RNA sequence: GGGAACGACUCGAGUAGAGUCGAAAAUAAUUCAUGAUAUGGAGCCACCGAGCCAUCGAUCUAUGGUACUACUAUCGGAAACGAUUAAAACCAUAGGGAGGCUCCGUGGCUCCUAAGUCUAGCGUAAGCUGUCUAGCAUCUUCGGAUGCUAGACAGCAAAAGAAACAACAACAACAAC
Reactivity to DMS in 0.01 (KOAc 150mM, MgCl2 10mM, bicine 150mM(pH8.5), 24C), signal-to-noise 1, nucleotides 027 to 126: u000a050a130u020u040c050a070u010g000a000u000a080u010g000g000a000g000c000c000a030c000c300g010a010g000c000c010a240u020c240g010a020u010c010u000a020u000g010g000u000a210c300u000a100c290u000a030u020c010g020g020a010a020a020c020g010a030u000u000a030a020a020a010c000c000a000u000a040g000g020g000a020g030g020c010u010c000c190g000u000g000g010c000u010c000c000u000a010a060g000u000c020u000a100g020c160g040u000a160a070
The data come from the RNA Mapping Database (RMDB), library TTRDEL. An RNA of 177 nucleotides, treated with DMS and read out base by base. The RNA was probed in 150 mM KOAc, 10 mM MgCl2 and 150 mM bicine (pH 8.5) at 24 C. Values cover nucleotides 27 to 126. For DMS, 680 sequencing reads were counted.